Chemical mapping of a 177-nucleotide RNA with DMS. Reactivities are given for positions 27 through 126. The reactions ran in a buffer of 150 mM KOAc, 10 mM MgCl2 and 150 mM bicine (pH 8.5), at 24 C. It was measured as part of the RMDB library TTRDEL.
RNA sequence: GGGAACGACUCGAGUAGAGUCGAAAAGAUAUGGAGAUCUGGACAUGGGCAUCGGAAACGAUGCUCCAACAGCCAGAAUCUCCUAAGUCAAAAGAGAGAUUGCGUGGUUCGCCACGCAAUCUCUCAAUCAUGCACCAUCGUUCGCGAUGGUGCAUGAAAAAGAAACAACAACAACAAC
Reactivity to DMS in 0.01 (KOAc 150mM, MgCl2 10mM, bicine 150mM(pH8.5), 24C), signal-to-noise 1, nucleotides 027 to 126: g000a000u030a300u030g000g000a000g020a040u000c000u000g010g000a020c160a250u000g010g000g020c000a040u000c000g030g000a080a070a170c000g000a010u000g000c000u050c000c040a010a010c250a130g010c000c000a020g000a090a160u000c000u010c000c000u000a000a000g010u010c050a070a090a020a170g050a020g010a000g000a000u000u000g020c000g010u010g000g070u000u010c230g020c000c000a000c000g020c000a010a000u000c000u000c000u000c000a010a070